[RMDB]
RNA sequence: GGGAACGACUCGAGUAGAGUCGAAAACCUGUUAUCUGACCAAUAACAGAAUGCACCACAGCGUAAAAUCAUCUGAUUGGGUGAGUUGGUCGCACCGCCAUUUGUCGAACGAACGCCAAGCCUAAGCACUACGAGUAUGUGUUCGCACAUACUCGAAGGUGGAUGUCUAGUUCGCUAGACAUCCACCAAAAGAAACAACAACAACAAC
Reactivity to 2A3 in 0.01 (KOAc 150mM, MgCl2 10mM, bicine 150mM(pH8.5), 24C), signal-to-noise 3, nucleotides 027 to 156: c010c000u000g000u000u010a020u010c010u010g000a020c000c000a020a040u010a000a000c000a000g060a120a100u140g000c080a020c040c020a050c040a030g070c040g070u080a020a040a060a100u110c070a090u030c120u160g120a160u110u150g080g010g010u000g040a030g010u050u050g010g000u010c000g020c000a010c000c010g000c030c040a110u090u060u120g050u040c010g040a060a050c060g040a030a010c080g080c020c050a040a030g000c040c050u150a090a010g050c070a050c120u160a040c060g000a000g000u000a000u000g040u020g010u040u050c150g000c060a000c000a000u010a000c000u000c020g020a030a010